[RMDB]
Background: Structure probing data (2A3) for a 207-nucleotide construct. For 2A3, 1,484 sequencing reads were counted. It was measured as part of the RMDB library M2RFPK. The reactions ran in a buffer of 150 mM KOAc, 10 mM MgCl2 and 150 mM bicine (pH 8.5), at 24 C.
RNA sequence: GGGAACGACUCGAGUAGAGUCGAAAAAGGCACUCCAUACCCUACUCCGACUCAAUACGUCCCCGUCGUACAGAAUGGUAACAUAUCUCUCCAAAUAUCUGAGCUUGGGUAUACCGGGAAACCCAACAAAAGCAAUUGUGGUUCGCCACAAUUGCAAGCUUAGCUACUGGUUCGCCAGUAGCUAAGCAAAAGAAACAACAACAACAAC
Reactivity to 2A3 in 0.01 (KOAc 150mM, MgCl2 10mM, bicine 150mM(pH8.5), 24C), signal-to-noise 2, nucleotides 027 to 156: a000g050g000c080a060c050u020c020c020a060u070a110c010c030c010u030a040c020u000c050c010g050a040c000u030c040a140a150u060a160c030g050u060c030c020c010c010g070u070c010g000u040a050c030a050g070a130a120u070g040g000u050a110a040c010a050u120a100u040c040u000c000u020c060c050a030a090a140u130a090u040c070u080g050a020g050c070u010u010g010g000g000u050a030u040a090c040c030g010g030g000a040a020a020c000c020c000a020a000c020a020a050a000a010g010c000a000a000u000u000g000u010g020g030u030u050c120g040c100c010a000c000a000a000u000u000g000c000a000a000